Annotation:
Chemical mapping of a 177-nucleotide RNA with 2A3 and DMS.
RNA sequence: GGGAACGACUCGAGUAGAGUCGAAAAUCUUGAGGUGGUGUUUUCUCUUCAAGUAGGUCAAUGUGGGCAAAUUGGUUUGAGGAAUGACAUCUUCGAAAGAAAUUCGGUCUUUCAAUUAAGCCGUAAGCGGAGUGCAAUUAUUCGUAAUUGCACUCCGAAAAGAAACAACAACAACAAC
Reactivity to 2A3 in 0.01 (KOAc 150mM, MgCl2 10mM, bicine 150mM(pH8.5), 24C), signal-to-noise 1, nucleotides 027 to 126: u000c000u010u050g020a010g040g000u060g050g000u040g030u100u020u070u070c030u010c000u050u040c010a010a010g030u030a050g190g000u050c030a060a090u090g010u110g080g040g050c040a100a120a080u060u030g060g000u030u040u130g000a000g010g010a020a010u030g010a000c000a000u000c000u080u060c010g030a040a020a060g030a020a050a030u140u070c050g000g020u030c020u040u020u030c020a100a180u090u070a050a000g030c000c050g020u100a050a000g100
Reactivity to DMS in 0.01 (KOAc 150mM, MgCl2 10mM, bicine 150mM(pH8.5), 24C), signal-to-noise 2, nucleotides 027 to 126: u000c020u000u010g000a220g010g010u000g000g030u010g000u000u000u030u000c090u000c020u000u000c030a040a070g010u010a050g010g000u000c050a050a060u010g020u010g020g000g000c140a040a100a120u000u000g010g010u000u000u000g000a060g000g010a060a050u000g000a060c060a070u000c030u000u000c020g000a170a060a060g000a020a020a250u010u000c060g000g000u010c000u000u000u000c090a060a100u000u000a040a050g010c000c010g020u010a070a120g020

For 2A3 the reverse transcriptase was SuperScript II with manganese. The DMS profile rests on 1,900 reads.